[RMDB]
RNA sequence: GGGAACGACUCGAGUAGAGUCGAAAAAGCAGGAAGCACUAUGGGCGCAGCGUCAAUGACGCUGACGGUACAGGCCAGACUAUUAUUGUCUGGUAUAGUGCAACAGCAGAACAAUUUGCUGAGGGCUUGCAUAAGCUUCGUUCGCGAAGCUUAUGCAAAAAGAAACAACAACAACAAC
Reactivity to 2A3 in 0.01 (KOAc 150mM, MgCl2 10mM, bicine 150mM(pH8.5), 24C), signal-to-noise 3, nucleotides 027 to 126: a000g080c080a110g120g090a170a050g000c000a010c020u010a000u070g030g050g020c080g020c000a000g020c000g000u000c080a250a190u250g000a000c000g000c000u000g090a070c000g000g010u180a040c010a020g030g070c000c000a020g000a000c010u000a060u300u040a070u270u200g000u000c000u020g000g000u000a000u020a000g000u000g000c000a000a000c000a000g020c000a010g040a100a080c100a070a220u090u050u090g000c010u000g020a060g020g070g000c000u010
Reactivity to DMS in 0.01 (KOAc 150mM, MgCl2 10mM, bicine 150mM(pH8.5), 24C), signal-to-noise 2, nucleotides 027 to 126: a020g000c030a160g000g000a140a030g010c000a010c000u000a000u000g000g100g000c110g000c010a000g000c000g020u000c000a130a150u100g000a010c000g010c020u020g010a000c010g040g020u020a010c040a200g000g000c000c010a000g000a030c000u000a120u010u030a170u130u000g000u000c000u000g000g000u000a000u000a000g000u000g030c000a100a260c010a070g020c000a040g000a100a100c300a080a200u040u000u000g040c020u000g040a120g000g020g000c020u000